[RMDB]
RNA sequence: GGGAACGACUCGAGUAGAGUCGAAAACAAGAAAGUGCUUGAGUUAAUUGAGUUUAUUUAAGCGCUGAUACAAUGCUGCCAGAAGAAUUUCAAUGCCAAGAACAGUUCAGUUUGAUUCAGUUUACAAUAACUGUUACGGGUUCGCCCGUAACAGUUAAAAAGAAACAACAACAACAAC
Reactivity to 2A3 in 0.01 (KOAc 150mM, MgCl2 10mM, bicine 150mM(pH8.5), 24C), signal-to-noise 1, nucleotides 027 to 126: c000a100a040g060a050a080a000g050u010g010c000u010u010g040a020g120u000u120a070a060u000u090g120a020g260u050u120u080a080u000u120u050a030a000g000c010g000c000u000g030a000u000a180c000a040a000u150g000c090u030g070c000c030a040g040a060a000g000a000a000u020u210u280c000a000a000u070g020c000c000a040a040g000a050a010c000a000g020u070u070c000a000g040u000u140u040g000a080u030u030c030a000g000u000u090u000a010c000a000a060
Reactivity to DMS in 0.01 (KOAc 150mM, MgCl2 10mM, bicine 150mM(pH8.5), 24C), signal-to-noise 3, nucleotides 027 to 126: c060a080a180g020a070a040a040g030u010g000c000u000u020g000a100g010u020u010a050a050u010u000g010a180g030u000u010u000a050u010u010u020a120a090g010c020g020c010u000g020a150u030a100c180a160a110u030g000c040u020g010c000c040a230g010a020a050g000a050a060u010u030u000c020a030a070u000g010c020c020a020a050g030a020a030c040a060g010u000u060c060a090g000u010u000u010g010a080u030u000c220a090g000u000u000u010a020c140a080a130